[RMDB]
RNA sequence: GGGAACGACUCGAGUAGAGUCGAAAAAUGAGGCACCGUGGUGAAGUAGCGCUCCAUCACGUGGGCGAGCAUGUCGCUUAUGCCGCACGCCGUCUGGUACCACGGCAGGGAGAGCGUCCACUUGGGAAACCGCUUGUGUCUUCGGACACAAGCGGUUAAAAGAAACAACAACAACAAC
Reactivity to DMS in 0.01 (KOAc 150mM, MgCl2 10mM, bicine 150mM(pH8.5), 24C), signal-to-noise 1, nucleotides 027 to 126: a010u000g000a070g010g000c040a110c090c090g000u000g010g010u000g020a050a050g020u000a210g010c080g000c050u000c050c000a110u000c050a050c120g020u020g000g020g040c050g010a140g010c060a070u010g030u010c230g000c020u000u000a090u000g000c000c040g000c070a150c140g010c020c080g010u000c060u020g000g030u000a210c060c140a020c000g000g000c110a140g000g010g000a070g000a050g060c020g030u000c020c010a070c060u000u000g000g010g010a100